[RMDB]
RNA sequence: GGGAACGACUCGAGUAGAGUCGAAAACUGCCGCCGGGACGCAGUGAUCCUCGCAGGGUCGCACGGUCGCCUCGGGUCGGCCUCGUGUCGGCUCGACCUGCGAGGGGAGCGAGUGGCGAGCCCGACCUGGCAGUAGACAGUUCGCUGUCUACUGCCAAAAAGAAACAACAACAACAAC
Reactivity to 2A3 in 0.01 (KOAc 150mM, MgCl2 10mM, bicine 150mM(pH8.5), 24C), signal-to-noise 4, nucleotides 027 to 126: c020u040g020c000c000g010c020c000g070g030g110a050c030g020c010a130g210u000g010a010u020c010c000u010c000g000c000a030g020g020g070u120c040g010c050a090c050g040g040u040c030g020c010c020u020c010g010g010g010u000c010g000g000c000c000u120c130g300u300g030u030c010g010g000c010u060c030g040a070c020c000u030g000c000g000a010g000g000g010g000a000g000c020g000a040g070u090g010g000c010g000a050g020c010c020c000g010a000c020c000
Reactivity to DMS in 0.01 (KOAc 150mM, MgCl2 10mM, bicine 150mM(pH8.5), 24C), signal-to-noise 2, nucleotides 027 to 126: c000u040g010c000c010g000c000c000g000g000g020a280c000g020c030a300g010u100g000a100u040c000c000u040c000g000c000a070g000g000g070u000c220g050c060a080c180g010g000u000c000g060c300c070u010c010g000g000g000u000c000g000g000c030c030u080c300g030u020g040u070c000g020g000c020u090c090g000a080c010c040u020g050c040g010a000g000g060g000g000a020g010c000g040a300g010u010g000g000c000g000a070g000c000c080c020g000a090c060c040

Source: RMDB library RFM100, as collected in RNAgym. The record gives the reactivity of an RNA of 177 nucleotides to 2A3 and DMS. Values are in units of 0.01, from 0 to 300, in steps of 10.